[RMDB]
RNA sequence: GGGAACGACUCGAGUAGAGUCGAAAAAACGUCUAUCUGGACAAGCGGCUGAAGCCCUCCCUGCGGCAACGCGUUAUCGCGGCCUGGCUGUGGUCGGGCCGCAAAGGGGUGAUCGCCGGCGCUUCGGCUAAUGUCCACCUUUCGAGGUGGACAUUAGAAAAGAAACAACAACAACAAC
Reactivity to DMS in 0.01 (KOAc 150mM, MgCl2 10mM, bicine 150mM(pH8.5), 24C), signal-to-noise 3, nucleotides 027 to 126: a040a060c140g010u000c000u000a080u010c160u010g020g010a050c040a130a110g010c140g010g000c010u000g000a050a260g020c020c060c060u000c010c000c000u000g020c030g010g010c190a070a060c040g010c010g000u000u010a100u010c190g010c000g000g000c010c000u000g000g000c000u000g050u010g030g020u000c000g020g010g020c010c000g020c000a000a030a100g000g010g000g010u000g000a090u000c070g010c030c060g040g000c150g010c010u000u000c020g000g000
Reactivity to 2A3 in 0.01 (KOAc 150mM, MgCl2 10mM, bicine 150mM(pH8.5), 24C), signal-to-noise 1, nucleotides 027 to 126: a000a000c070g010u010c070u090a270u110c110u190g010g000a020c030a060a060g110c030g030g020c040u090g040a050a030g000c020c000c000u020c020c030c020u030g060c000g040g000c070a110a040c030g030c050g080u160u090a210u240c080g010c010g030g000c000c000u000g000g000c000u060g060u080g270g040u030c000g030g000g100c000c040g000c030a010a010a020g030g010g030g000u050g010a090u100c050g010c090c030g090g030c050g000c010u020u060c050g050g020

Notes
Source: RMDB library OK2TRN, as collected in RNAgym. Structure probing data (DMS and 2A3) for a 177-nucleotide construct. The RNA was probed in 150 mM KOAc, 10 mM MgCl2 and 150 mM bicine (pH 8.5) at 24 C. 2A3 adducts were read by reverse transcription with SuperScript II with manganese.